[RMDB]
RNA sequence: GGGAACGACUCGAGUAGAGUCGAAAAGGUACAAAGUUAUAGAUUGUGACAGGUACACAGUCCCUGAGCGCUACUGCAGCGCAAGGUAGACCGGAACAUGGGCACCCGGUGAUGUAGUUUGCGUUGAAGAGUCAUACGUGUUCGCACGUGUGACUCUAAAAGAAACAACAACAACAAC
Reactivity to 2A3 in 0.01 (KOAc 150mM, MgCl2 10mM, bicine 150mM(pH8.5), 24C), signal-to-noise 3, nucleotides 027 to 126: g060g010u020a020c020a010a200a030g000u020u030a030u060a050g190a160u040u250g010u000g030a010c030a030g060g080u010a000c080a000c020a040g050u020c000c000c000u010g060a040g010c000g000c010u020a020c020u040g010c020a010g000c010g000c010a000a010g060g000u060a050g070a070c010c000g010g040a060a030c040a100u080g000g000g010c000a030c000c010c020g000g000u050g000a020u010g020u000a020g000u000u180u130g040c030g040u030u050g080a070
Reactivity to DMS in 0.01 (KOAc 150mM, MgCl2 10mM, bicine 150mM(pH8.5), 24C), signal-to-noise 7, nucleotides 027 to 126: g010g020u000a010c030a060a080a100g010u020u010a050u020a090g010a140u040u020g010u010g000a030c020a100g000g010u010a020c020a060c060a120g000u010c010c000c000u010g020a070g010c010g000c000u010a040c070u010g000c050a030g010c010g000c010a020a010g000g000u000a100g010a090c010c020g010g000a130a100c150a090u040g000g000g000c020a050c030c000c290g010g020u000g010a070u010g010u000a020g010u020u020u010g010c080g020u010u010g000a160